[RMDB]
An RNA of 177 nucleotides, treated with DMS and read out base by base. It was measured as part of the RMDB library TTRDEL. Reactivities are given for positions 27 through 126. The RNA was probed in 150 mM KOAc, 10 mM MgCl2 and 150 mM bicine (pH 8.5) at 24 C. DMS adducts were read by reverse transcription with MarathonRT.

RNA sequence: GGGAACGACUCGAGUAGAGUCGAAAAGAUAUGGAUGUAGGACAUGUUCCUGCUGGUCGGAAACGACCAGAAGAACAACAGCCUACUGUCCUAAGUCAGUGCGAUUAGUCGUUCGCGACUAAUCGAAGGCAUCGAUAUGCUUCGGCAUAUCGAUGCCAAAAGAAACAACAACAACAAC
Reactivity to DMS in 0.01 (KOAc 150mM, MgCl2 10mM, bicine 150mM(pH8.5), 24C), signal-to-noise 1, nucleotides 027 to 126: g000a020u000a300u000g000g000a000u020g000u000a000g000g010a080c100a160u000g020u000u000c060c050u010g010c000u000g010g020u000c010g010g000a100a060a210c000g000a010c000c000a000g000a300a060g020a040a040c050a020a060c200a170g000c000c000u000a000c010u020g060u000c020c000u020a070a120g020u000c020a140g020u030g000c000g010a000u000u000a000g020u000c010g020u000u000c190g010c000g030a020c000u000a000a000u010c000g020a000a050